Structure probing data (2A3 and DMS) for a 207-nucleotide construct. The data come from the RNA Mapping Database (RMDB), library OK3TST. Conditions: 150 mM KOAc, 10 mM MgCl2 and 150 mM bicine (pH 8.5), 24 C. The DMS profile rests on 14,181 reads. DMS adducts were read by reverse transcription with MarathonRT. High DMS reactivity at an A or C suggests that its Watson-Crick edge is free.
[RMDB]
RNA sequence: GGGAACGACUCGAGUAGAGUCGAAAAUUUGAAGCCAACAUACCAGGCUAUCACACUCUAUUUUGCACGCGGGACUUUGCUAUGCGUAAUGUUAGAGCAUGGCUCGGGUUUGAUGUUGAAGGUGCACAUGUCUGUGGUGAUAAUGUUGGCACUAAUGAUAUGAUUCUUAGUUCGCUAAGAAUCAUAUAAAAGAAACAACAACAACAAC
Reactivity to 2A3 in 0.01 (KOAc 150mM, MgCl2 10mM, bicine 150mM(pH8.5), 24C), signal-to-noise 7, nucleotides 027 to 156: u190u100u130g070a100a000g010c000c000a010a000c000a010u060a090c020c010a020g020g020c020u070a090u200c020a010c000a040c010u040c020u040a150u030u120u080u110g040c040a020c030g220c020g010g010g230a200c030u030u080u080g000c000u010a050u090g000c020g110u120a190a160u210g060u130u140a060g020a010g090c000a010u020g020g000c010u020c030g080g000g000u010u050u080g060a060u040g050u120u030g090a100a030g040g000u010g020c030a020c020a080u060g030u010c040u030g100u150g100g030u070g050a040u050a190a020u020g000u000u010g000g070c000a010c040u060a100a080u080g090
Reactivity to DMS in 0.01 (KOAc 150mM, MgCl2 10mM, bicine 150mM(pH8.5), 24C), signal-to-noise 4, nucleotides 027 to 156: u000u000u010g020a160a160g010c000c010a030a020c020a070u010a130c050c020a130g010g010c050u000a060u000c030a090c040a050c020u000c020u000a080u000u000u000u000g010c050a030c010g000c050g000g030g000a080c050u000u000u000g030c020u000a030u010g010c020g020u010a100a110u010g010u010u000a120g010a100g010c000a040u000g010g020c000u000c050g010g010g030u000u000u010g010a100u010g020u000u010g020a100a110g000g040u000g000c040a040c120a040u000g010u000c040u010g010u000g030g020u010g010a100u000a060a070u000g020u040u000g010g020c000a090c050u000a080a160u000g010